Description: Chemical mapping of a 177-nucleotide RNA with 2A3 and DMS. For DMS, 2,154 sequencing reads were counted. The reactions ran in a buffer of 150 mM KOAc, 10 mM MgCl2 and 150 mM bicine (pH 8.5), at 24 C.
RNA sequence: GGGAACGACUCGAGUAGAGUCGAAAAAGGCUAUUUGUUCUGGAGAUAUUUCAGCCUGGAAAUGAGUGUAUGGGGUGUUUUAAGCAGAACACAUGAUAAGGUUACGUAUCAUUACAUAUUGUGUGCCGAUUUUAGGCCCAUUCGUGGGCCUAAAAUCAAAAGAAACAACAACAACAAC
Reactivity to 2A3 in 0.01 (KOAc 150mM, MgCl2 10mM, bicine 150mM(pH8.5), 24C), signal-to-noise 1, nucleotides 027 to 126: a000g030g020c000u030a030u070u090u000g020u100u000c040u060g080g070a110g070a050u060a150u070u160u060c040a000g000c000c000u000g000g070a120a100a010u170g000a070g120u060g030u020a220u130g000g000g060g000u000g060u000u100u000u100a020a000g030c000a000g000a120a010c080a000c000a080u090g000a000u060a190a000g080g020u090u030a000c050g010u000a050u130c000a130u000u070a050c080a000u130a030u000u130g000u000g000u050g070c040c070
Reactivity to DMS in 0.01 (KOAc 150mM, MgCl2 10mM, bicine 150mM(pH8.5), 24C), signal-to-noise 2, nucleotides 027 to 126: a070g000g000c020u010a010u010u030u000g000u000u000c010u010g020g030a050g000a090u020a060u000u020u020c120a070g010c000c000u000g000g040a090a030a080u030g020a120g020u020g000u000a010u000g000g000g030g030u000g000u030u040u020u030a020a140g020c130a080g010a100a110c010a010c050a050u000g000a080u000a020a090g020g020u010u000a080c070g000u010a050u020c060a040u020u030a050c050a160u010a040u060u000g000u000g000u000g000c070c100